[RMDB]
RNA sequence: GGGAACGACUCGAGUAGAGUCGAAAAUUGAACAGCUUAAUCGGAGGCAGAAGGCAGUUUUGACUUUUUUUUCCUCGCUCCUUCCUGAUUGCUUCUGUUUUCUCCGGAAGCGAGUCAUCCACUGGGAGUGUGGUGUUGCUGAAGCUCCAUGCAGUGGUGGUUAUAUCGUUUUCGAACGAUAUAACCAAAAAGAAACAACAACAACAAC
Reactivity to DMS in 0.01 (KOAc 150mM, MgCl2 10mM, bicine 150mM(pH8.5), 24C), signal-to-noise 1, nucleotides 027 to 156: u000u010g010a050a100c040a180g010c010u000u020a110a130u000c020g020g010a070g020g000c070a050g020a070a070g000g000c010a080g030u000u010u010u030g010a070c020u010u000u000u000u010u010u000u000c060c030u010c030g000c040u000c000c000u000u000c050c050u020g020a040u000u000g020c010u000u000c020u000g020u000u000u010u020c030u000c110c020g000g010a040a020g000c000g000a100g030u000c010a110u000c000c030a040c040u000g010g000g000a080g050u000g010u010g030g030u000g020u000u000g000c010u000g010a090a210g020c000u000c000c020a300u010g030c000a090g050u000g000g030
Reactivity to 2A3 in 0.01 (KOAc 150mM, MgCl2 10mM, bicine 150mM(pH8.5), 24C), signal-to-noise 1, nucleotides 027 to 156: u170u130g050a080a010c020a010g030c020u020u100a000a030u210c010g000g030a000g020g000c000a020g010a020a020g160g060c010a040g040u060u050u090u050g070a090c080u110u050u040u000u010u040u180u240c090c040u080c080g040c040u080c010c060u060u130c020c030u040g000a080u000u090g000c000u020u010c020u010g050u070u020u160u120c000u010c000c010g020g000a000a000g010c000g010a020g010u010c030a050u030c010c000a020c020u030g000g040g000a040g000u040g000u050g040g050u020g030u060u080g000c020u040g020a070a020g000c000u010c020c000a040u200g050c020a000g000u000g010g030

Structure probing data (DMS and 2A3) for a 207-nucleotide construct. The 2A3 profile rests on 883 reads. For DMS, 4,163 sequencing reads were counted. For 2A3 the reverse transcriptase was SuperScript II with manganese.